[RMDB]
RNA sequence: GGGAACGACUCGAGUAGAGUCGAAAAAAACUUCUGCCGAUAUUCUGGUGGUUGAUGAGGUUAGUAUGUGCACUAAUUAUGAUCUUUCAAUUAUUAAUGCACGUAUUAAAGCUAAGCACAUUGUCUACAAUGGCUAGAUGUUCGCAUCUAGCCAUUGAAAAGAAACAACAACAACAAC
Reactivity to DMS in 0.01 (KOAc 150mM, MgCl2 10mM, bicine 150mM(pH8.5), 24C), signal-to-noise 1, nucleotides 027 to 126: a050a070a090c030u000u000c030u010g000c000c030g010a190u010a110u000u000c100u000g050g030u000g000g000u000u000g000a070u000g010a140g000g010u000u000a020g020u000a000u000g010u000g000c010a030c030u000a010a010u000u000a140u000g000a040u010c170u010u010u000c020a020a130u000u000a000u000u020a020a020u000g010c000a010c000g020u000a000u000u000a000a010a050g000c070u010a070a070g000c120a030c100a070u000u010g020u000c040u010a150